[RMDB]
RNA sequence: GGGAACGACUCGAGUAGAGUCGAAAAUGUCGGCAAGCUCUAUAUAUGGACACAUACGAAGGGUUUUGGUUGUUUUGUAUCUCAAGCCGACUUUGAGUAUUUGAGGAAAAUACGACAGAAAAAACAAAUAGACCGGUAUCCUUCGGGAUACCGGUAACUAGUUGCAAUGGUUCGCCAUUGCAACUAGAAAAGAAACAACAACAACAAC
Reactivity to DMS in 0.01 (KOAc 150mM, MgCl2 10mM, bicine 150mM(pH8.5), 24C), signal-to-noise 1, nucleotides 027 to 156: u000g010u000c030g040g000c010a150a130g010c010u000c020u000a180u000a080u000a090u030g000g010a180c250a100c060a070u020a050c060g000a150a110g000g040g010u000u000u000u000g030g000u000u010g000u000u000u020u010g000u000a130u000c030u000c000a070a200g010c040c010g000a050c030u000u010u000g030a300g000u000a010u000u000u000g020a220g010g010a210a030a040a060u010a030c030g000a240c050a160g060a010a000a100a080a050a100c020a040a030a180u000a110g010a040c010c000g000g000u000a000u000c000c000u000u010c300g010g020g010a000u010a010c000c000g000g000u000a000a020
Reactivity to 2A3 in 0.01 (KOAc 150mM, MgCl2 10mM, bicine 150mM(pH8.5), 24C), signal-to-noise 1, nucleotides 027 to 156: u040g000u000c000g000g000c010a040a000g010c020u010c010u080a040u020a020u020a000u300g070g020a120c040a060c020a220u070a010c040g100a050a050g030g080g000u040u050u120u190g050g010u020u000g000u050u030u030u020g020u020a080u040c010u020c070a090a040g000c000c000g000a000c020u020u020u020g020a000g000u020a010u000u030u020g030a100g030g220a000a000a000a000u060a050c070g070a010c040a050g160a000a110a020a020a000a020c030a000a080a000u120a020g180a010c020c010g000g000u000a000u010c000c000u030u080c230g000g000g010a020u000a000c000c000g020g000u010a000a000